[RMDB]
Source: RMDB library TTRDES, as collected in RNAgym. This 177-nucleotide RNA was probed chemically with 2A3. Reactivities are given for positions 27 through 126. The RNA was probed in 150 mM KOAc, 10 mM MgCl2 and 150 mM bicine (pH 8.5) at 24 C.
RNA sequence: GGGAACGACUCGAGUAGAGUCGAAAAGAUAUGGAGCCAUGCAGAAGAUAAGUGGUCGGAAACGACCACUAUCGUAUCUGGUGGCUCCUAAGUCAAACUCCUAGUAGCGUUCGCGCUACUAGGAGAAGUGUAUUGGUCACUUCGGUGACCAAUACACAAAAGAAACAACAACAACAAC
Reactivity to 2A3 in 0.01 (KOAc 150mM, MgCl2 10mM, bicine 150mM(pH8.5), 24C), signal-to-noise 1, nucleotides 027 to 126: g010a020u050a010u070g000g040a000g030c010c040a040u300g270c010a260g090a300a050g020a240u010a300a210g030u020g010g000u020c010g000g000a050a010a010c000g000a000c000c000a000c000u000a000u000c000g000u030a300u030c000u010g000g000u000g010g000c000u000c010c000u000a020a000g000u000c010a000a090a110c010u020c000c000u020a000g010u000a000g030c020g000u080u080c300g000c000g000c190u000a000c000u000a000g000g030a010g000a000a030